Structure probing data (DMS and 2A3) for a 177-nucleotide construct.

RNA sequence: GGGAACGACUCGAGUAGAGUCGAAAACAUUGUCACCGCUAAUAAGAACUCUCAGGUUGAAAUAUCUGACCGUGUCGCUCGUAAACUGGCCGAUUCGGAGGUUCCUUUCGACAAACGAAGUGUCAUGCCAGUAUCUUCAGUUCGCUGAAGAUACUGGAAAAGAAACAACAACAACAAC
Reactivity to DMS in 0.01 (KOAc 150mM, MgCl2 10mM, bicine 150mM(pH8.5), 24C), signal-to-noise 2, nucleotides 027 to 126: c090a060u010u010g020u010c030a110c070c050g000c060u010a080a090u000a130a140g010a040a030c040u000c140u000c050a000g000g000u000u010g000a110a070a100u000a040u010c030u030g010a090c080c010g010u000g030u000c050g000c050u000c000g020u000a060a080a060c220u000g030g010c180c000g030a110u000u010c050g020g020a270g000g010u010u000c020c030u000u000u000c050g000a090c040a050a080a140c120g000a040a110g000u000g010u030c050a130u010g020
Reactivity to 2A3 in 0.01 (KOAc 150mM, MgCl2 10mM, bicine 150mM(pH8.5), 24C), signal-to-noise 2, nucleotides 027 to 126: c050a100u100u170g060u110c010a000c030c020g000c060u050a090a080u090a300a020g030a040a040c010u000c000u020c080a000g000g070u000u020g070a120a050a010u080a010u000c000u030g060a090c010c030g010u000g000u000c010g000c040u020c010g070u120a150a200a180c050u040g020g000c030c010g020a010u040u000c000g010g020a000g000g110u040u020c020c030u050u180u130c030g040a050c040a040a090a030c060g070a120a010g000u030g000u100c020a030u120g070

Conditions: 150 mM KOAc, 10 mM MgCl2 and 150 mM bicine (pH 8.5), 24 C. The data come from the RNA Mapping Database (RMDB), library OK2TST. DMS adducts were read by reverse transcription with MarathonRT.